[RMDB]
RNA sequence: GGGAACGACUCGAGUAGAGUCGAAAAGCUCAAUUGGCUAGACCUCUAUCAGGACAUCGACCGAUGGCUACAACGGGAUAGAGACGGCAUUUUUGAAAUUUCGGAAUUACAGGAGCAGGUGGCACCCUAAAUAGCUUCUUUUCGAAGAAGCUAUUUAAAAAGAAACAACAACAACAAC
Reactivity to DMS in 0.01 (KOAc 150mM, MgCl2 10mM, bicine 150mM(pH8.5), 24C), signal-to-noise 9, nucleotides 027 to 126: g010c120u000c020a060a070u000u000g010g010c010u010a120g020a120c110c010u000c020u000a030u000c030a160g010g010a070c040a020u000c020g010a170c270c200g010a030u000g010g000c050u010a100c160a100a130c190g000g010g000a030u000a030g010a040g010a100c080g000g010c030a040u000u000u000u000u000g010a040a100a160u000u000u000c040g010g000a080a060u010u000a060c080a080g010g010a050g010c040a060g010g010u000g010g010c100a100c020c010c030
Reactivity to 2A3 in 0.01 (KOAc 150mM, MgCl2 10mM, bicine 150mM(pH8.5), 24C), signal-to-noise 5, nucleotides 027 to 126: g020c020u010c040a040a130u120u090g050g010c010u020a050g090a150c000c020u000c000u020a040u050c030a020g060g020a020c000a040u040c030g150a170c170c130g030a040u030g030g020c020u110a060c060a190a060c070g180g080g000a020u020a030g030a010g000a010c020g010g000c040a050u050u030u050u080u130g130a120a120a080u080u090u070c040g030g070a040a040u100u030a080c030a060g040g040a020g020c010a010g040g030u040g030g010c030a040c010c000c000